[RMDB]
RNA sequence: GGGAACGACUCGAGUAGAGUCGAAAAGGAGUUAAGUUCGCUUAACUCCCACUACCGAGAAUGCGACUCGGUAUAUCGCAAUAACCCUUCGAAACAAGGGAACCACUGACGACUUCGGUCGUCAGAAGCAAGGAUCAGAGUUCGCUCUGAUCCUUGCAAAAGAAACAACAACAACAAC
Reactivity to DMS in 0.01 (KOAc 150mM, MgCl2 10mM, bicine 150mM(pH8.5), 24C), signal-to-noise 1, nucleotides 027 to 126: g000g000a000g010u000u000a000a000g000u010u000c100g080c020u000u010a000a040c010u000c020c000c040a030c160u000a020c040c000g000a030g000a160a060u000g030c300g000a010c000u000c000g000g000u000a000u000a040u000c120g040c090a040a090u000a210a010c000c010c000u000u000c030g000a090a090a130c300a020a020g000g000g020a090a150c200c180a120c000u000g000a030c000g010a000c000u000u050c150g010g000u000c000g000u000c000a000g000a040a110
Reactivity to 2A3 in 0.01 (KOAc 150mM, MgCl2 10mM, bicine 150mM(pH8.5), 24C), signal-to-noise 2, nucleotides 027 to 126: g050g000a030g000u010u010a010a000g030u040u080c170g000c060u000u000a000a000c000u000c000c000c000a090c040u020a010c020c000g000a000g030a010a090u220g090c120g040a040c010u000c000g000g000u000a040u020a010u030c030g000c080a050a080u140a160a220c000c030c000u020u020c130g170a160a050a050c020a070a010g000g020g020a010a030c030c030a020c030u010g000a000c030g000a000c020u030u080c230g110g000u000c000g000u000c000a000g000a000a010
This 177-nucleotide RNA was probed chemically with DMS and 2A3. Reactivities are given for positions 27 through 126. For 2A3 the reverse transcriptase was SuperScript II with manganese. Source: RMDB library M2PK50, as collected in RNAgym.